Structure probing data (2A3 and DMS) for a 207-nucleotide construct. It was measured as part of the RMDB library OK3TST. For 2A3, 4,188 sequencing reads were counted. For DMS the reverse transcriptase was MarathonRT.
RNA sequence: GGGAACGACUCGAGUAGAGUCGAAAACAGAAUGCGACUUUUGCGUCGAGUCAUGACAAGCAGAAUGCGACUUUUGCGUCGAGUCAUGACAAGCAGGCGCCGCACAGUAGACGUGAGACAGCAACGCUGAAUGCGACUUCUGCGUUGGGUCAAGCUCUGUUUCGCCAUAGUUCGCUAUGGCGAAACAAAAAGAAACAACAACAACAAC
Reactivity to 2A3 in 0.01 (KOAc 150mM, MgCl2 10mM, bicine 150mM(pH8.5), 24C), signal-to-noise 5, nucleotides 027 to 156: c040a020g100a100a050u060g010c010g020a070c060u080u140u210u180g000c010g000u020c010g030a040g010u000c000a000u000g000a000c030a040a070g010c030a040g070a120a040u170g090c050g110a170c050u060u110u110u080g040c040g070u140c060g090a040g000u010c000a000u000g000a000c010a000a010g070c060a050g040g000c010g010c010c010g000c010a050c010a030g100u150a020g010a040c080g020u030g020a050g000a010c010a050g110c000a040a010c030g000c020u050g010a010a030u190g040c100g100a120c090u000u000c010u060g000c000g060u020u010g010g010g000u020c010a020a000g020c020u010c000
Reactivity to DMS in 0.01 (KOAc 150mM, MgCl2 10mM, bicine 150mM(pH8.5), 24C), signal-to-noise 2, nucleotides 027 to 156: c050a150g020a130a090u000g000c010g010a100c030u000u000u000u000g000c030g000u020c070g020a300g010u010c010a040u010g000a060c050a140a260g030c070a060g020a060a050u000g010c120g010a160c090u000u000u000u010g040c070g000u020c030g070a290g030u010c010a020u010g010a090c030a070a140g010c010a060g020g000c100g030c020c050g000c010a050c060a130g010u010a180g000a100c030g000u020g010a270g020a100c080a130g000c010a110a080c010g000c000u010g000a120a100u000g030c030g010a140c110u010u000c000u000g020c000g020u000u000g020g010g020u000c030a040a140g010c020u000c010